The data come from the RNA Mapping Database (RMDB), library VIROID. Chemical mapping of a 207-nucleotide RNA with 2A3. For 2A3, 1,269 sequencing reads were counted. The reactions ran in a buffer of 150 mM KOAc, 10 mM MgCl2 and 150 mM bicine (pH 8.5), at 24 C. For 2A3 the reverse transcriptase was SuperScript II with manganese. Values cover nucleotides 27 to 156.
RNA sequence: GGGAACGACUCGAGUAGAGUCGAAAACACUAAGCCGGACGGCGCCCUCGCACCAGUUCCGCUGUGGGUUCGCCUACAAGAACGUACGGUGUUGAGGCCCUGUCCGCCGCUGCGCUGCCACCUACUCUUCGCGCCGCUAGUCGAGCGGACUCCAGGUUCACUGGGAACGGUUCGCCGUUCCCAGUGAAAAAGAAACAACAACAACAAC
Reactivity to 2A3 in 0.01 (KOAc 150mM, MgCl2 10mM, bicine 150mM(pH8.5), 24C), signal-to-noise 2, nucleotides 027 to 156: c110a000c040u150a070a000g040c050c000g000g000a010c030g020g060c090g000c040c040c000u000c000g000c000a000c000c010a030g000u000u000c000c000g000c010u020g000u020g000g060g000u000u040c300g070c060c000u000a000c000a020a150g000a020a010c020g050u130a010c080g050g000u040g000u080u300g010a010g010g000c000c020c000u010g000u000c000c000g000c010c040g020c010u020g000c080g000c030u040g060c050c020a080c030c020u110a120c030u060c010u130u150c030g020c010g010c110c010g030c030u020a040g210u170c090g040a020g010c010g000g030a030c000u000c000c040a040g100g080u000